[RMDB]
RNA sequence: GGGAACGACUCGAGUAGAGUCGAAAAAUUAUGAAAGUUGGGCAGUAUAAAAAUAAUGACCUGUUGCAAAUAACGGAUUAUCCUCGAAAUCGAGCCGUAUGGUCAGACAGACAACUUUAGGGUUAUACAUAUAACGCGCUUUCGAGCGCGUUAUAUGAAAAGAAACAACAACAACAAC
Reactivity to DMS in 0.01 (KOAc 150mM, MgCl2 10mM, bicine 150mM(pH8.5), 24C), signal-to-noise 3, nucleotides 027 to 126: a090u010u050a050u030g000a040a020a040g010u000u000g000g010g020c050a140g000u010a040u070a030a060a090a060a070u030a090a110u010g000a040c030c000u000g000u000u010g010c130a060a070a120u030a070a050c010g000g010a160u000u030a080u030c300c010u000c000g000a100a080a150u030c050g000a010g000c000c000g000u000a030u020g000g000u010c030a010g000a060c100a120g020a080c020a010a020c010u000u000u020a040g000g000g000u000u000a060u010a100
Reactivity to 2A3 in 0.01 (KOAc 150mM, MgCl2 10mM, bicine 150mM(pH8.5), 24C), signal-to-noise 2, nucleotides 027 to 126: a000u110u010a020u070g120a000a000a000g000u000u000g070g060g030c000a050g110u020a030u130a160a140a010a040a000u270a000a040u030g000a000c000c000u130g080u100u150g100c020a000a000a150u070a230a000c060g030g000a010u040u230a050u300c000c040u010c050g070a140a100a110u160c000g000a000g000c000c000g010u010a130u020g040g000u070c050a000g000a000c060a000g040a030c000a000a110c000u070u050u030a060g040g030g030u050u160a010u050a160